[RMDB]
RNA sequence: GGGAACGACUCGAGUAGAGUCGAAAAUGCAUCAUCAUACGAACGAGCUUUUCUACUUUAUUUUCAUGUCCAGAAAAGACACUCAACACAUACCAAGCUUUUGCCACUCUCUAUCUCCUAAGGCUUAUCCUUAGGAACCAUUCGUGGUUCCUAAGGAAAAAGAAACAACAACAACAAC
Reactivity to DMS in 0.01 (KOAc 150mM, MgCl2 10mM, bicine 150mM(pH8.5), 24C), signal-to-noise 2, nucleotides 027 to 126: u000g010c050a030u000c020a050u000c040a090u010a130c160g000a060a060c100g020a070g000c000u010u000u010u000c020u020a050c060u000u000u000a000u010u000u000u000c060a090u010g010u010c080c050a080g000a040a040a050a140g010a070c050a070c040u000c060a050a070c090a080c080a080u000a120c090c040a060a130g010c040u010u000u000u010g020c020c020a050c060u000c010u010c030u000a050u000c090u000c020c040u000a050a070g020g020c040u020u000a170
Reactivity to 2A3 in 0.01 (KOAc 150mM, MgCl2 10mM, bicine 150mM(pH8.5), 24C), signal-to-noise 1, nucleotides 027 to 126: u080g000c030a070u020c000a000u030c020a030u070a200c050g040a090a040c050g020a020g000c000u000u080u000u000c020u060a080c030u070u170u070a100u100u150u040u070c040a040u100g000u000c050c020a040g100a070a110a010a010g080a060c020a030c040u070c020a040a080c050a000c000a040u060a110c020c020a040a030g020c040u090u090u060u060g020c000c020a010c030u000c010u020c010u010a040u060c050u030c030c020u010a050a000g090g000c010u070u080a070